[RMDB]
Chemical mapping of a 177-nucleotide RNA with 2A3 and DMS.
RNA sequence: GGGAACGACUCGAGUAGAGUCGAAAAGGGACGACAACUCUGGGGAGAAAAGGGUGGAUCGGAUGGGAAGAGUAGAUCCCAUGGGAAUCCGCUGGUUCCCCUGAUGUCCAGUCCCUCCCCAGUCCGAGAGAAUCUUUAUCUUCGGAUAAAGAUUCUCAAAAGAAACAACAACAACAAC
Reactivity to 2A3 in 0.01 (KOAc 150mM, MgCl2 10mM, bicine 150mM(pH8.5), 24C), signal-to-noise 2, nucleotides 027 to 126: g010g010g010a000c030g010a000c010a050a060c090u000c030u050g000g000g000g000a040g050a010a210a070a050g200g000g020u040g000g020a020u010c040g150g100a040u010g020g000g010a050a050g070a060g170u220a060g050a160u000c000c000c000a000u040g100g000g120a140a200u010c010c020g000c030u020g020g060u030u030c000c010c020c000u030g020a020u070g000u040c030c000a010g020u000c000c000c000u030c020c000c020c010a010g090u020c040c030g050a030
Reactivity to DMS in 0.01 (KOAc 150mM, MgCl2 10mM, bicine 150mM(pH8.5), 24C), signal-to-noise 1, nucleotides 027 to 126: g000g000g020a020c010g000a150c300a050a040c080u000c030u000g000g000g010g010a040g000a030a050a090a090g030g010g060u000g010g010a020u000c030g000g010a020u000g000g020g010a030a070g000a140g020u000a130g010a110u000c000c000c000a010u010g000g000g020a200a070u000c000c010g010c000u000g000g000u000u000c000c000c000c020u000g020a020u000g000u000c030c050a300g000u000c000c000c000u010c030c020c000c070a130g000u010c030c010g000a300
Source: RMDB library VIROID, as collected in RNAgym.